Chemical mapping of a 170-nucleotide RNA with 2A3 and DMS. Values cover nucleotides 27 to 129. The RNA was probed in 150 mM KOAc, 10 mM MgCl2 and 150 mM bicine (pH 8.5) at 24 C.
[RMDB]
RNA sequence: GGGAACGACUCGAGUAGAGUCGAAAACCCCUUCGGAAAAGGACCGGAGGAGGGAGCUAGGAGCGUGGGGGGGCCGGUGGAGCCAUGGGAUGCUCCUCCCGAUUCCGUCCAUCCCCCCCCCCAGGAGAAGGGCUGCGGUUCGCCGCAGCCAAAAGAAACAACAACAACAAC
Reactivity to 2A3 in 0.01 (KOAc 150mM, MgCl2 10mM, bicine 150mM(pH8.5), 24C), signal-to-noise 2, nucleotides 027 to 129: c030c000c000c010u060u130c070g010g030a020a010a010a000g070g040a020c050c090g010g010a020g000g000a040g000g000g000a060g000c070u150a060g000g010a020g020c010g010u110g000g000g010g000g010g000g020c020c020g030g000u070g020g000a080g050c010c020a080u180g060g030g040a010u040g020c000u060c000c010u000c010c040c000g030a000u090u040c010c010g000u000c000c000a040u020c000c010c000c000c000c000c000c000c000c000a040g000g040a080g020a000a070g050
Reactivity to DMS in 0.01 (KOAc 150mM, MgCl2 10mM, bicine 150mM(pH8.5), 24C), signal-to-noise 1, nucleotides 027 to 129: c060c000c010c130u000u070c120g000g000a000a000a000a000g020g030a110c270c080g060g010a070g000g000a130g000g000g000a000g050c170u040a100g010g010a140g050c040g100u050g000g000g010g010g010g000g040c060c140g000g110u020g030g030a080g020c120c230a060u130g020g040g000a060u000g010c020u000c040c010u050c000c000c020g000a250u120u000c090c020g040u020c000c070a140u040c300c000c000c000c190c060c100c000c010c000a140g010g010a120g010a150a020g110
For DMS the reverse transcriptase was MarathonRT. The 2A3 profile rests on 3,131 reads.